Notes: The data come from the RNA Mapping Database (RMDB), library OK1LIB. This 177-nucleotide RNA was probed chemically with DMS and 2A3. Reactivities are given for positions 27 through 126. The DMS profile rests on 23,557 reads.
[RMDB]
RNA sequence: GGGAACGACUCGAGUAGAGUCGAAAAGAAUUGGUAUGUAAGCUACAUCUUCCGGUAGCUGCGUCACACUUUAAGAGUGUGCAUACUGAGCCGAAGCUCAGCUUCGGUCCCCCAAGGGAAGGACAAAAGGCUAUUUAGUAUUCGUACUAAAUAGCCUAAAAGAAACAACAACAACAAC
Reactivity to DMS in 0.01 (KOAc 150mM, MgCl2 10mM, bicine 150mM(pH8.5), 24C), signal-to-noise 7, nucleotides 027 to 126: g010a110a080u010u010g010g010u000a000u000g000u000a300a160g000c000u000a010c000a040u030c020u000u020c000c010g010g010u000a000g000c000u000g000c010g010u000c010a000c000a010c000u000u010u040a080a060g010a010g010u000g010u000g020c000a000u000a000c000u000g010a020g010c000c000g010a020a000g010c010u050c230a160g010c010u000u000c010g000g000u000c030c030c000c160c170a140a090g000g000g000a010a010g000g010a140c300a060a100a080
Reactivity to 2A3 in 0.01 (KOAc 150mM, MgCl2 10mM, bicine 150mM(pH8.5), 24C), signal-to-noise 9, nucleotides 027 to 126: g130a020a080u020u020g000g000u010a000u000g000u000a010a010g000c000u000a000c000a110u040c010u000u000c000c000g000g000u000a000g000c000u000g000c000g000u010c000a000c000a000c010u080u120u300a300a130g220a010g280u000g000u000g000c000a000u000a000c000u000g000a000g000c000c000g000a000a000g000c030u100c300a040g000c000u020u000c000g000g000u010c000c000c000c010c000a030a030g110g000g000a000a000g020g010a020c100a020a100a020